RNA sequence: GGGAACGACUCGAGUAGAGUCGAAAAGAUAUGGACAAGGUUGAUCGCAUCGAUCUCGUCUCGGAAACGAGACGAGGGAGCGGCCAACUUGUCCUAAGUCAAAGGUGAGUCCUUCGGGACUCACCAACAUUCAUAUUAUGUUCGCAUAAUAUGAAUGAAAAGAAACAACAACAACAAC
Reactivity to DMS in 0.01 (KOAc 150mM, MgCl2 10mM, bicine 150mM(pH8.5), 24C), signal-to-noise 8, nucleotides 027 to 126: g010a030u000a250u010g000g000a020c010a010a040g010g020u000u010g000a020u000c010g030c010a300u000c220g000a030u010c000u000c000g000u000c000u000c010g000g000a040a060a070c000g010a020g000a010c000g000a010g000g000g000a010g040c000g030g000c040c020a020a030c000u000u000g010u000c000c000u000a010a070g000u000c030a080a140a170g000g010u000g000a020g010u000c000c000u000u010c250g030g010g010a020c000u000c000a000c000c010a040a050
Reactivity to 2A3 in 0.01 (KOAc 150mM, MgCl2 10mM, bicine 150mM(pH8.5), 24C), signal-to-noise 7, nucleotides 027 to 126: g010a010u030a020u080g010g000a000c010a010a030g180g030u120u100g140a300u130c010g000c030a100u300c090g010a040u000c000u000c010g000u000c000u010c000g000g000a010a020a010c000g000a000g000a010c000g000a000g000g000g000a010g000c010g000g010c010c010a120a100c020u000u000g000u000c000c000u000a040a010g010u010c050a130a110a110g020g000u010g010a000g000u000c030c000u090u160c300g070g000g000a000c000u000c000a000c000c000a000a000

About this RNA
This 177-nucleotide RNA was probed chemically with DMS and 2A3. For DMS, 22,648 sequencing reads were counted. 2A3 adducts were read by reverse transcription with SuperScript II with manganese. The RNA was probed in 150 mM KOAc, 10 mM MgCl2 and 150 mM bicine (pH 8.5) at 24 C. DMS adducts were read by reverse transcription with MarathonRT. For 2A3, 54,790 sequencing reads were counted. Source: RMDB library TTRDES, as collected in RNAgym.